Structure probing data (2A3 and DMS) for a 177-nucleotide construct. 2A3 adducts were read by reverse transcription with SuperScript II with manganese. The reactions ran in a buffer of 150 mM KOAc, 10 mM MgCl2 and 150 mM bicine (pH 8.5), at 24 C. Source: RMDB library OK1LIB, as collected in RNAgym.
RNA sequence: GGGAACGACUCGAGUAGAGUCGAAAACGACUUUUUGAUUUUGGAUAGGUUCAGACUUCGUGUGUCCUUUAUGUUUUUUUCUGAAUCGUAAUAAAGGGGUGCCAAAACAAAGGGUGGUUCGAAGCUGCGAUAAGAUUAGUUUCGACUAAUUUUAUCGAAAAGAAACAACAACAACAAC
Reactivity to 2A3 in 0.01 (KOAc 150mM, MgCl2 10mM, bicine 150mM(pH8.5), 24C), signal-to-noise 9, nucleotides 027 to 126: c020g030a030c020u020u040u030u030u050g190a280u030u040u020u010g050g010a050u070a140g030g000u020u020c000a010g020a060c040u080u070c200g050u070g030u030g050u110c000c000u050u090u050a120u070g130u060u110u040u030u020u060u010c000u000g010a010a030u010c030g040u170a050a070u080a050a100a010g010g010g020g030u080g050c000c000a010a020a000a010c010a000a020a010g010g010g000u050g020g030u040u030c040g070a070a020g050c110u110g020
Reactivity to DMS in 0.01 (KOAc 150mM, MgCl2 10mM, bicine 150mM(pH8.5), 24C), signal-to-noise 5, nucleotides 027 to 126: c050g000a040c040u000u000u010u000u010g000a130u000u000u000u010g000g010a130u030a070g000g000u000u000c000a020g010a050c090u010u010c100g010u010g010u010g000u010c010c010u010u030u030a050u010g000u000u000u010u010u010u010u000c020u020g000a010a020u010c040g010u030a060a060u030a040a050a050g000g000g000g020u010g010c000c020a030a010a030a030c040a030a010a030g000g000g030u000g010g020u010u010c060g000a050a060g000c120u020g010